RNA sequence: GGGAACGACUCGAGUAGAGUCGAAAAUGAAAUAGCGUGUGCAAGACGCUGAUCUUGCCAUGAUCUGGAACUUUAGUGCUGAGGUCCGAGUUCCAGGGUAUCAUGUCGGACCUUUGCACUAAUUAAAGAAAACACAGUAGUUCGCUACUGUGUUUUCAAAAGAAACAACAACAACAAC
Reactivity to DMS in 0.01 (KOAc 150mM, MgCl2 10mM, bicine 150mM(pH8.5), 24C), signal-to-noise 4, nucleotides 027 to 126: u000g020a080a080a130u010a060g020c030g030u000g000u010g020c010a020a000g000a030c020g010c220u010g010a100u000c000u000u000g010c000c000a020u000g000a060u000c040u000g000g020a120a140c090u000u000u000a010g020u000g000c010u010g000a000g010g000u000c000c000g010a020g000u000u010c130c110a070g010g010g010u010a060u010c090a070u010g010u000c010g010g000a010c000c000u000u010u000g010c000a000c000u000a000a010u000u000a070a070a130
Reactivity to 2A3 in 0.01 (KOAc 150mM, MgCl2 10mM, bicine 150mM(pH8.5), 24C), signal-to-noise 3, nucleotides 027 to 126: u180g060a040a030a060u120a060g050c000g000u050g120u150g030c020a010a000g000a020c040g070c300u100g030a280u020c000u000u000g010c010c000a000u020g020a090u040c030u060g080g050a050a120c030u050u010u000a000g000u000g000c010u020g020a000g010g000u030c010c020g000a000g020u110u080c050c040a000g030g030g000u100a100u300c080a090u170g070u090c000g000g010a000c000c000u020u000u000g000c000a000c000u000a010a000u030u040a020a020a030